[RMDB]
RNA sequence: GGGAACGACUCGAGUAGAGUCGAAAAGGUCGGUGUUUCGACACCGACCACUUACCGAGAAUGUUCCUCGGUAUAUAAAACAAACCCUUGGAAACAAGGGUAUACGAAUCGUGUUCGCACGAUUCAACAGGUCUACAACGUUCGCGUUGUAGACCUGAAAAGAAACAACAACAACAAC
Reactivity to DMS in 0.01 (KOAc 150mM, MgCl2 10mM, bicine 150mM(pH8.5), 24C), signal-to-noise 1, nucleotides 027 to 126: g000g000u010c000g030g050u040g000u000u020u010c290g000a040c000a000c000c000g010a040c010c010a000c090u010u000a000c010c000g030a040g000a200a190u020g000u000u000c030c000u000c030g000g000u010a040u000a040u000a040a050a090a140c190a060a110a040c000c000c000u000u000g000g000a190a070a180c010a000a020g000g020g000u000a000u020a020c240g000a000a000u000c000g000u000g010u040u010c180g020c000a010c000g010a010u000u000c000a130a160